RNA sequence: GGGAACGACUCGAGUAGAGUCGAAAACAAUCAACAAUAUGGUUUGUGUCGUUAUGCUGAAAAUCGUUGAGGUUGUAUGGAAUAGGUUAACCGUAAGACCUUAAGUUGAAAAACUUUAAAAUUAAUCAAAAUCAUGUACACUUCGGUGUACAUGAAAUCACCUUGUCCUGUUCGCAGGACAAGGUGAAAAAGAAACAACAACAACAAC
Reactivity to 2A3 in 0.01 (KOAc 150mM, MgCl2 10mM, bicine 150mM(pH8.5), 24C), signal-to-noise 1, nucleotides 027 to 156: c030a000a070u170c020a030a150c050a060a070u060a060u120g000g000u040u020u000g010u010g060u030c060g050u040u020a090u170g010c010u040g050a030a000a020a060u080c030g000u010u000g050a030g000g000u020u060g050u080a120u100g020g050a100a090u090a100g000g080u030u000a030a090c030c030g010u090a060a130g000a000c000c010u020u000a000a030g000u000u000g100a200a060a000a000a000c010u050u070u140a000a070a140a120u160u140a120a100u060c010a010a080a000a120u010c000a050u000g020u000a000c030a000c000u050u060c110g090g000u000g000u000a000c000a000u000g000a000a000a000